RNA sequence: GGGAACGACUCGAGUAGAGUCGAAAACUGCCGUAUCUGGAGCCUGAUGCGCACGGCAUUCAAGGAUAAUGAUUUACAGGCCUACGGUUUGCGUGUUGUUGAACCACACCACGACGGAACGCCGCACUGGCAUAUGAUGCUUUUUUGUAAUCCACGCCAUUUCUUGUGAUUUCGAUCACAAGAAAUGAAAAGAAACAACAACAACAAC
Reactivity to 2A3 in 0.01 (KOAc 150mM, MgCl2 10mM, bicine 150mM(pH8.5), 24C), signal-to-noise 4, nucleotides 027 to 156: c020u040g020c010c000g000u030a040u040c080u120g070g030a060g050c000c020u030g020a040u050g020c050g010c090a060c120g190g000c010a010u110u100c080a080a060g060g010a050u090a140a080u200g120a060u060u080u190a060c030a000g070g000c000c020u020a030c040g030g000u040u140u160g120c080g010u050g020u020u010g000u000u040g040a080a060c030c010a010c040a010c040c000a040c040g100a030c030g060g040a150a030c050g030c040c010g020c040a070c150u080g050g000c050a050u060a060u170g120a040u040g020c000u070u060u010u030u050u070g090u060a060a040u040c040c020a040c070g040c040
Reactivity to DMS in 0.01 (KOAc 150mM, MgCl2 10mM, bicine 150mM(pH8.5), 24C), signal-to-noise 2, nucleotides 027 to 156: c060u010g000c000c020g000u000a070u000c060u000g010g010a130g050c020c020u000g030a140u010g010c030g060c050a130c110g020g000c020a110u010u010c020a100a130g020g000a110u000a080a140u000g030a120u000u000u000a090c100a130g060g000c030c010u000a130c050g030g010u010u000u010g020c060g010u000g030u010u000g000u000u000g010a100a150c030c040a050c070a030c020c030a060c040g020a090c000g000g000a100a090c130g020c030c010g060c040a090c070u000g010g050c030a190u000a070u000g020a080u000g010c030u000u000u010u000u010u000g000u000a040a100u000c050c020a060c050g020c070
Conditions: 150 mM KOAc, 10 mM MgCl2 and 150 mM bicine (pH 8.5), 24 C.
An RNA of 207 nucleotides, treated with 2A3 and DMS and read out base by base.
DMS adducts were read by reverse transcription with MarathonRT.
Reactivities are given for positions 27 through 156.
In probing experiments dimethyl sulfate is read out at A N1 and C N3, which are open when not base-paired.
It was measured as part of the RMDB library OK3TST.
The DMS profile rests on 4,441 reads.
The 2A3 profile rests on 2,901 reads.